The record gives the reactivity of an RNA of 207 nucleotides to 2A3.
RNA sequence: GGGAACGACUCGAGUAGAGUCGAAAAGCCAUGUGACUUUUGUCGCAUGGCGACGACGUAGUUUUCUACGUCGGAUAUUAGCCAUCCGUUGGCCCAGGAUGGCCUAUCUGCCGAACAUGACUUUUGUCUUGUGAGGUAGUUAGUGAUUUGGGCAUCAGGCAUACCUACCAUUCGUGGUAGGUAUGCCAAAAGAAACAACAACAACAAC
Reactivity to 2A3 in 0.01 (KOAc 150mM, MgCl2 10mM, bicine 150mM(pH8.5), 24C), signal-to-noise 1, nucleotides 027 to 156: g070c010c000a000u000g000u010g000a010c050u050u080u300u300g000u000c000g000c000a000u000g000g000c000g000a000c000g000a000c010g030u000a030g080u000u060u220u270c000u040a000c000g000u000c010g000g010a040u060a130u080u130a010g020c020c000a000u000c030c000g000u110u060g110g050c000c000c000a000g000g000a000u000g000g030c000c000u000a000u000c000u030g010c000c060g000a000a000c000a000u040g010a020c000u090u220u300u300g000u000c000u000u000g030u000g010a030g000g000u000a000g000u000u000a000g030u040g120a060u220u150u160g010g000g010c030a040u100c060a040
For 2A3, 488 sequencing reads were counted. Conditions: 150 mM KOAc, 10 mM MgCl2 and 150 mM bicine (pH 8.5), 24 C.